An RNA of 177 nucleotides, treated with 2A3 and DMS and read out base by base. It was measured as part of the RMDB library OK2TST. For DMS the reverse transcriptase was MarathonRT. Values cover nucleotides 27 to 126. 2A3 adducts were read by reverse transcription with SuperScript II with manganese.
RNA sequence: GGGAACGACUCGAGUAGAGUCGAAAAACAUCAUGAGAUCAGUUGACUUAUUUGAUUUUCUUAUGGCUCAACUUUGUUAACAACAAGAAAUAUUGUUAUUUUCUUCUCUGAGCUUCCAAUGUGGCAAAGUCAACUCAUUAUUCGUAAUGAGUUGACUAAAAGAAACAACAACAACAAC
Reactivity to 2A3 in 0.01 (KOAc 150mM, MgCl2 10mM, bicine 150mM(pH8.5), 24C), signal-to-noise 4, nucleotides 027 to 126: a000c020a070u090c020a020u160g020a000g000a060u080c050a030g050u050u050g040a030c020u080u090a040u050u050u030g060a070u010u120u140u060c020u040u130a110u180g050g000c030u000c010a010a030c020u120u070u100g020u030u050a050a030c040a010a010c010a000a050g060a110a160a040u150a070u040u080g020u080u040a090u050u080u020u010c030u090u000c020u000c020u030g040a040g020c000u040u030c010c020a070a160u220g070u110g110g040c040a090a020
Reactivity to DMS in 0.01 (KOAc 150mM, MgCl2 10mM, bicine 150mM(pH8.5), 24C), signal-to-noise 5, nucleotides 027 to 126: a070c120a070u000c040a030u010g010a030g010a050u010c110a070g000u000u000g010a040c040u000u010a050u000u000u000g000a100u010u000u010u010c040u010u010a040u000g000g010c170u000c020a010a020c030u000u010u000g010u000u000a030a040c080a040a070c080a030a070g000a090a070a060u000a050u000u010g000u000u000a060u010u000u000u000c020u010u000c020u000c030u000g020a040g010c100u000u000c020c020a050a110u000g010u000g000g020c160a080a080